The record gives the reactivity of an RNA of 177 nucleotides to 2A3 and DMS. Source: RMDB libraries RFM100 and RFMREP, as collected in RNAgym. The RNA was probed in 150 mM KOAc, 10 mM MgCl2 and 150 mM bicine (pH 8.5) at 24 C.
[RMDB]
RNA sequence: GGGAACGACUCGAGUAGAGUCGAAAACAUACAAACUGCUUGGGGAAUGGUUUUGGUUUGAGAACCGAUGAAGGACGUGCCAAGCUGCGAUAUGCCUUGGGGAGGUGCAUGGAGCCAUUGAUCCAAGUCACGAUUUCCUUUUCGAAGGAAAUCGUGAAAAAGAAACAACAACAACAAC
Reactivity to 2A3 in 0.01 (KOAc 150mM, MgCl2 10mM, bicine 150mM(pH8.5), 24C), signal-to-noise 3, nucleotides 027 to 126: c020a030u280a050c080a000a090a050c050u120g000c010u020u000g000g000g000g020a040a080u010g040g060u030u050u050u030g120g070u120u030u080g240a200g040a030a020c020c010g100a120u120g080a060a060g080g020a020c030g040u060g050c000c000a020a030g020c000u020g000c000g040a090u040a060u270g060c000c000u030u030g020g000g000g000a110g060g000u070g010c020a060u080g040g000a000g020c020c000a000u000u040g030a030u020c000c000a000a020g020
Reactivity to DMS in 0.01 (KOAc 150mM, MgCl2 10mM, bicine 150mM(pH8.5), 24C), signal-to-noise 3, nucleotides 027 to 126: c050a120u050a120c110a060a080a130c110u000g000c010u010u010g010g010g010g030a050a010u020g010g010u000u000u010u030g000g010u020u010u010g020a180g000a050a020c000c020g040a090u010g000a060a110g030g020a170c080g000u020g000c000c000a020a030g000c000u010g030c170g000a130u040a070u030g000c050c020u000u000g010g000g040g000a130g020g030u020g010c090a080u040g000g000a060g000c010c020a070u020u000g000a080u010c010c010a030a030g010